[RMDB]
RNA sequence: GGGAACGACUCGAGUAGAGUCGAAAAUAAACACCUCGAAUGAGGUGGAGUAUGGUGCAGCUAAGAGGCUCGACAGAUGCACCAAAAAGCGAGCCUUCAAAGGUCGAGGAAAACUCGACCCCAAAAACGUCAUCGAGGUGUUCGCACCUUGAUGACGAAAAGAAACAACAACAACAAC
Reactivity to DMS in 0.01 (KOAc 150mM, MgCl2 10mM, bicine 150mM(pH8.5), 24C), signal-to-noise 2, nucleotides 027 to 126: u060a120a100a130c000a000c000c000u010c010g010a100a100u040g000a000g000g010u030g000g010a040g000u020a020u000g000g010u000g040c000a120g000c160u080a020a230g030a060g000g000c010u000c000g000a300c290a180g020a120u000g000c110a090c000c030a000a020a020a070a100g010c040g020a030g020c000c000u000u000c010a000a010a030g000g000u000c000g000a010g000g000a020a010a040a040c000u000c010g010a010c010c000c030c050a010a030a030a050a140
Reactivity to 2A3 in 0.01 (KOAc 150mM, MgCl2 10mM, bicine 150mM(pH8.5), 24C), signal-to-noise 1, nucleotides 027 to 126: u080a000a060a000c000a000c010c000u010c060g100a090a120u230g000a000g000g030u000g000g000a000g010u030a010u010g000g000u010g030c010a050g000c020u190a080a000g050a050g000g040c000u040c020g060a070c030a010g210a030u180g020c000a000c040c000a000a030a000a000a000g000c000g030a000g000c000c060u010u000c010a040a020a000g000g030u010c000g000a020g000g050a010a010a010a030c000u010c020g000a010c020c000c000c000a030a020a000a000a010

The record gives the reactivity of an RNA of 177 nucleotides to DMS and 2A3. DMS adducts were read by reverse transcription with MarathonRT. Conditions: 150 mM KOAc, 10 mM MgCl2 and 150 mM bicine (pH 8.5), 24 C.